[RMDB]
RNA sequence: GGGAACGACUCGAGUAGAGUCGAAAAGAUAUGGACCCUUGUCAGUUCGGAGACACACGAGGAUCAUCGCUCGGAAACGAGCGAUGGGAGUGUGUUGACGAACUUGGAUUUAGGGUCCUAAGUCAAAGUAUUAUACGCGUUCGCGCGUAUAAUACAAGUGUUAACAGCUCUUCGGAGCUGUUAACACAAAAGAAACAACAACAACAAC
Reactivity to 2A3 in 0.01 (KOAc 150mM, MgCl2 10mM, bicine 150mM(pH8.5), 24C), signal-to-noise 1, nucleotides 027 to 156: g030a050u070a080u140g000g000a010c000c000c000u000u030g000u000c000a000g010u000u000c010g000g020a060g000a010c000a000c000a000c010g050a240g080g000a000u000c010a000u000c020g020c010u000c010g030g000a080a090a050c010g000a010g000c000g020a000u010g000g000g000a030g000u000g000u000g000u000u000g000a020c000g020a000a000c010u020u100g050g000a010u300u190u180a000g010g000g000u000c000c000u010a060a000g040u030c070a140a020a040g000u000a000u000u020a000u000a000c000g010c030g020u030u050c260g000c000g000c020g160u010a000u000a000a010u010a000c010a020a010